The record gives the reactivity of an RNA of 177 nucleotides to DMS. For DMS the reverse transcriptase was MarathonRT. The DMS profile rests on 1,168 reads. In probing experiments dimethyl sulfate is read out at A N1 and C N3, which are open when not base-paired. Values cover nucleotides 27 to 126.
RNA sequence: GGGAACGACUCGAGUAGAGUCGAAAAAUCGACGACAAGGCUUGGUUCUUCGCUCUCACCGACCAAGUCAGCAUCGCCGAGGCAGAAGAGUUCGCGCAGAAGCUGGCGCAGUGGCGGCUGGCUGAGGAUGUUUUGCUCUGUUCGCAGAGCAAAACAUAAAAGAAACAACAACAACAAC
Reactivity to DMS in 0.01 (KOAc 150mM, MgCl2 10mM, bicine 150mM(pH8.5), 24C), signal-to-noise 2, nucleotides 027 to 126: a150u050c030g020a080c040g000a100c080a140a120g000g000c020u000u000g000g020u000u000c040u000u010c110g000c020u010c070u000c030a120c170c080g000a040c040c050a050a010g030u010c010a050g000c300a140u010c010g000c010c000g000a070g010g030c060a110g010a070a090g000a090g010u000u000c050g010c100g050c130a080g010a120a060g000c010u010g000g010c060g000c050a080g020u000g000g000c050g010g000c030u000g000g030c030u000g010a100g020g010